[RMDB]
This 177-nucleotide RNA was probed chemically with DMS and 2A3. Reactivities are given for positions 27 through 126. Source: RMDB library OK2TST, as collected in RNAgym. The RNA was probed in 150 mM KOAc, 10 mM MgCl2 and 150 mM bicine (pH 8.5) at 24 C. The 2A3 profile rests on 9,938 reads.
RNA sequence: GGGAACGACUCGAGUAGAGUCGAAAAAUCGACGCUGGCCCGGUGCCACGAGAAUCUGGACCGGCAAACGAUAGAGCAUCCGCACUUGGCCGCGCACAAGACCACUUCAGGAGCAAGUUCCGUGUCACGUAUUAGCCAUAUUCGUAUGGCUAAUACGAAAAGAAACAACAACAACAAC
Reactivity to DMS in 0.01 (KOAc 150mM, MgCl2 10mM, bicine 150mM(pH8.5), 24C), signal-to-noise 7, nucleotides 027 to 126: a070u010c030g010a170c140g000c040u010g040g010c020c010c030g010g010u000g010c100c080a070c160g010a110g010a100a100u000c020u000g010g010a120c070c030g000g030c130a050a080a110c060g010a160u010a040g000a110g020c120a100u000c040c070g000c050a050c050u010u000g020g010c020c020g010c060g010c040a040c090a080a100g010a060c030c020a060c040u000u000c080a070g000g000a070g000c070a050a100g010u000u000c010c030g020u000g020u010c130a180
Reactivity to 2A3 in 0.01 (KOAc 150mM, MgCl2 10mM, bicine 150mM(pH8.5), 24C), signal-to-noise 5, nucleotides 027 to 126: a000u030c010g060a030c030g000c100u160g020g010c000c000c000g000g020u040g040c020c020a080c100g090a090g030a070a050u030c020u050g020g040a070c030c010g030g000c070a120a100a020c050g020a030u060a080g050a010g040c050a040u020c020c030g000c010a000c020u010u030g020g000c000c030g010c010g000c010a010c010a040a040g020a040c000c010a030c030u110u080c050a080g070g070a040g030c060a110a070g040u060u000c010c030g030u080g070u050c070a030